[RMDB]
RNA sequence: GGGAACGACUCGAGUAGAGUCGAAAAGUGGCCGCACUGGGCGCAUGUGGUCUGCCGUUGGGCGCCGGGUUUGUCAGUGAGUGGCUGCUGGUCCAGUCGUUGAUCCACGCUGCCCCCGGACACGACCGGCACAGAUCCGAUUCGUCGGAUCUGUGCCAAAAGAAACAACAACAACAAC
Reactivity to 2A3 in 0.01 (KOAc 150mM, MgCl2 10mM, bicine 150mM(pH8.5), 24C), signal-to-noise 2, nucleotides 027 to 126: g010u050g010g030c000c000g040c040a010c030u030g060g070g000c060g000c030a040u040g060u060g090g010u030c070u140g040c000c020g120u100u210g210g000g000c110g020c000c010g000g040g030u070u180u130g020u040c000a000g000u000g220a090g060u130g060g000c040u010g000c000u020g020g000u000c000c010a050g070u050c050g020u040u130g040a160u040c000c000a030c020g020c020u140g000c010c020c010c010c000g000g000a040c060a010c120g030a020c010c000